RNA sequence: GGGAACGACUCGAGUAGAGUCGAAAAUGACGUUUUCGAACGUCACGGUAGGGGUCGAGUGAGCGUGAGGGACAUGCUCUGAAGCCUCCACGGAGCAACAGCCUACCCACCACGAACACUCGACGGAGGCACCCCACAUAACGACUUCGGUCGUUAAAGGUAGCGAACAGUUCGCUGUUCGCUACCUAAAAGAAACAACAACAACAAC
Reactivity to 2A3 in 0.01 (KOAc 150mM, MgCl2 10mM, bicine 150mM(pH8.5), 24C), signal-to-noise 2, nucleotides 027 to 156: u100g050a000c020g010u000u000u040u090c260g080a070a000c000g000u000c040a000c080g030g040u150a130g060g140g060g000u000c020g030a000g000u000g000a040g060c000g010u060g060a240g000g000g070a080c070a130u140g000c000u010c000u000g060a050a000g000c010c000u000c000c000a000c010g000g000a000g000c020a080a140c110a170g180c010c000u080a170c030c110c010a160c180c040a000c010g000a090a000c000a000c000u000c010g030a020c000g000g000a000g000g000c000a020c000c060c000c000a120c000a030u110a010a000c000g030a000c010u020u090c290g120g000u000c000g000u010u000a060a010